Overview:
The record gives the reactivity of an RNA of 177 nucleotides to DMS. Values are in units of 0.01, from 0 to 300, in steps of 10. The DMS profile rests on 746 reads.
RNA sequence: GGGAACGACUCGAGUAGAGUCGAAAAAGGCAGCUUCCCGGGUUUUAAGCUACGGACGAUGCAAACGUAGCAGGCAUCGAAUUUUCGGCCCUUCGAAAAGCUGAGAUGAGCUCAGCAAGGGAAUCAAAACAUCCCUCAGUUUCGACUGAGGGAUGUUAAAAGAAACAACAACAACAAC
Reactivity to DMS in 0.01 (KOAc 150mM, MgCl2 10mM, bicine 150mM(pH8.5), 24C), signal-to-noise 1, nucleotides 027 to 126: a130g030g010c060a010g000c150u040u020c010c000c020g050g000g000u000u000u000u000a080a030g010c020u000a010c020g030g000a200c030g000a070u000g020c090a070a150a160c020g000u010a000g030c070a030g000g000c040a060u000c020g040a100a190u040u010u020u000c030g080g000c020c030c050u030u020c080g020a050a050a120a110g000c010u000g010a020g040a240u000g010a160g010c010u000c010a000g010c010a110a050g000g000g000a060a030u030c150a080a050